Description
This 177-nucleotide RNA was probed chemically with 2A3 and DMS. For DMS, 9,764 sequencing reads were counted.
RNA sequence: GGGAACGACUCGAGUAGAGUCGAAAAGACGCCUGUGUGGCGAAGCGAGCAAUGGUAUAAGCCGCAAUAGAAGAUGAGAUGGAAGCGGCAAGAUAGAAUGCUCGCAAAGAGAUCCAUCUCACAGAGAACCAUUAUUUACCUUCGGGUAAAUAAUGGUAAAAGAAACAACAACAACAAC
Reactivity to 2A3 in 0.01 (KOAc 150mM, MgCl2 10mM, bicine 150mM(pH8.5), 24C), signal-to-noise 7, nucleotides 027 to 126: g120a020c010g020c010c020u200g070u130g100u240g200g010c010g010a070a000g000c000g000a000g000c020a090a180u170g160g000u160a090u050a150a030g000c010c010g000c020a010a050u150a110g120a100a000g110a190u060g000a000g000a000u010g010g020a140a060g000c010g010g000c020a000a000g060a030u130a030g110a130a040u070g000c000u010c000g000c000a000a030a000g040a000g000a010u020c000c000a010u010c000u030c000a020c020a010g160a000g020a050
Reactivity to DMS in 0.01 (KOAc 150mM, MgCl2 10mM, bicine 150mM(pH8.5), 24C), signal-to-noise 5, nucleotides 027 to 126: g010a140c020g000c000c010u020g020u030g000u030g020g030c010g010a120a190g000c000g020a010g000c020a060a090u040g020g010u020a070u010a090a150g010c020c010g010c010a240a120u060a090g010a170a120g020a180u020g000a020g000a000u000g010g010a050a160g000c000g000g000c000a030a060g000a170u020a060g000a090a090u000g000c000u000c000g010c010a020a030a090g000a090g000a160u000c000c010a000u000c010u000c000a020c050a230g000a120g010a100
Source: RMDB library OK1LIB, as collected in RNAgym.